RNA sequence: GGGAACGACUCGAGUAGAGUCGAAAAGAAGGCACUUUCGAGUGCCUUCAUGGGGAGCUCAGGUCUCCCUCCCUUGCAAACACCCUAAGGGAGGAGACCUAAUUAGGUGCACUUUCGAGUGCACCAAUGAUCCAUGCAGUUUCGACUGCAUGGAUCAAAAAGAAACAACAACAACAAC
Reactivity to DMS in 0.01 (KOAc 150mM, MgCl2 10mM, bicine 150mM(pH8.5), 24C), signal-to-noise 2, nucleotides 027 to 126: g020a030a030g000g010c000a030c000u000u000u040c130g010a000g040u000g000c000c000u000u000c000a050u000g010g000g010g010a200g010c100u000c120a040g010g030u000c000u010c080c060c010u000c000c000c000u000u000g010c200a040a090a120c150a110c070c010c020u000a040a020g010g000g000a020g000g000a030g020a030c000c010u010a010a030u010u010a120g020g010u000g000c030a000c000u000u000u010c140g000a020g010u000g010c000a000c000c000a030a010
Reactivity to 2A3 in 0.01 (KOAc 150mM, MgCl2 10mM, bicine 150mM(pH8.5), 24C), signal-to-noise 2, nucleotides 027 to 126: g000a000a010g010g020c010a000c000u030u050u160c250g080a010g000u000g000c000c010u010u010c000a000u010g000g000g000g020a050g020c070u080c170a000g060g010u050c010u030c090c000c000u000c000c010c000u000u000g090c080a140a130a080c040a170c060c010c020u120a010a010g020g010g000a000g010g000a000g000a000c000c000u000a000a050u100u130a040g000g000u000g010c010a000c030u030u140u080c250g080a020g000u010g000c000a000c000c000a020a010